[RMDB]
RNA sequence: GGGAACGACUCGAGUAGAGUCGAAAAAGGAGCCCCCAUGACGCUGGAACCGUCCCGGAAGUGGGAGAAAGGGAGGCGAAGAUAGAAGGGGAGACCCCGAUCAGAAUGCCGAUCGGGUGCAAGCACCAGAGUGUGAGCUUCGGCUCACACAAAAGAAACAACAACAACAAC
Reactivity to 2A3 in 0.01 (KOAc 150mM, MgCl2 10mM, bicine 150mM(pH8.5), 24C), signal-to-noise 5, nucleotides 027 to 129: a000g100g020a020g030c000c020c000c000c010a080u100g020a030c020g000c040u030g000g040a070a020c020c000g090u080c020c020c000g060g040a190a110g100u220g050g030g020a020g120a090a050a030g020g000g050a060g000g000c020g010a010a000g040a010u210a050g100a090a030g010g000g000g000a000g010a030c000c000c000c000g000a010u010c000a010g080a270a090u140g100c050c060g030a060u020c010g000g000g000u010g010c000a030a000g020c000a030c040c010a010g050a020
Reactivity to DMS in 0.01 (KOAc 150mM, MgCl2 10mM, bicine 150mM(pH8.5), 24C), signal-to-noise 5, nucleotides 027 to 129: a000g020g000a080g010c010c020c020c000c020a130u030g040a150c050g030c060u050g000g000a020a000c110c050g050u040c050c020c020g000g040a080a080g050u040g020g040g020a090g020a010a010a010g000g000g000a170g020g010c040g020a040a020g000a080u060a060g030a120a060g030g000g030g000a110g010a080c160c020c010c050g010a090u020c020a030g050a180a090u040g040c140c020g000a050u000c000g040g000g050u000g010c000a060a070g030c100a160c040c000a040g000a150